[RMDB]
An RNA of 177 nucleotides, treated with DMS and read out base by base.
In probing experiments dimethyl sulfate is read out at A N1 and C N3, which are open when not base-paired.
Conditions: 150 mM KOAc, 10 mM MgCl2 and 150 mM bicine (pH 8.5), 24 C.
DMS adducts were read by reverse transcription with MarathonRT.
RNA sequence: GGGAACGACUCGAGUAGAGUCGAAAAGAUAUGGACCCAGGACAUGCCUGGAGGUCGGAAACGACCUCGAGGCAACAGCCUGGUCCUAAGUCAAACAGGCCAAACAUCUUCGGAUGUUUGGCCUGAACUAAUCUCUCUGCUUCGGCAGAGAGAUUAGAAAAGAAACAACAACAACAAC
Reactivity to DMS in 0.01 (KOAc 150mM, MgCl2 10mM, bicine 150mM(pH8.5), 24C), signal-to-noise 1, nucleotides 027 to 126: g000a030u000a300u020g000g010a000c100c080c050a010g000g000a020c180a270u000g000c000c020u000g010g040a010g000g020u010c000g020g000a060a070a240c010g000a010c000c000u000c010g000a020g000g010c010a000a000c200a120g020c000c000u000g000g000u000c000c020u000a010a070g000u000c000a190a110a260c020a000g000g020c000c000a000a000a020c000a000u000c000u000u040c150g010g000a020u000g000u000u010u010g000g010c010c000u000g000a010a070